[RMDB]
RNA sequence: GGGAACGACUCGAGUAGAGUCGAAAACACACCGGAUUUCGCGGUGUGCCCGUGCGACCUUGGUCUUGGCUUUGCGGCGGUUGUUCGAGCCCUUCUGCUUGCGGGCCAUUUGCCGCUGGUAGCGGGCUUAUCCUCUAGAGUUCGCUCUAGAGGAUAAAAAAGAAACAACAACAACAAC
Reactivity to 2A3 in 0.01 (KOAc 150mM, MgCl2 10mM, bicine 150mM(pH8.5), 24C), signal-to-noise 9, nucleotides 027 to 126: c010a000c000a010c000c000g040g050a200u140u240u240c180g030c010g070g000u010g000u010g010c000c000c000g010u050g040c050g050a060c010c010u030u090g040g040u080c010u040u060g050g010c010u030u050u170g030c020g020g000c020g020g010u020u010g020u050u070c040g020a020g020c010c010c000u100u120c020u030g020c010u020u040g010c010g020g030g130c040c030a100u070u060u140g040c000c000g010c020u010g020g000u010a010g010c000g000g000g000c000
Reactivity to DMS in 0.01 (KOAc 150mM, MgCl2 10mM, bicine 150mM(pH8.5), 24C), signal-to-noise 9, nucleotides 027 to 126: c030a040c020a020c000c010g010g000a240u010u020u040c150g000c010g010g000u000g020u000g000c010c010c000g020u030g010c080g010a040c030c020u020u020g000g010u010c060u010u010g010g010c020u000u010u020g000c040g010g000c060g010g000u000u000g020u000u010c060g000a060g000c040c020c010u010u020c010u000g010c010u010u010g010c050g000g010g010c070c130a090u000u020u020g010c020c000g000c060u000g010g010u010a050g020c300g010g000g000c040

Conditions: 150 mM KOAc, 10 mM MgCl2 and 150 mM bicine (pH 8.5), 24 C.
Chemical mapping of a 177-nucleotide RNA with 2A3 and DMS.
Reactivities are given for positions 27 through 126.
DMS adducts were read by reverse transcription with MarathonRT.
Source: RMDB libraries RFM100 and RFMREP, as collected in RNAgym.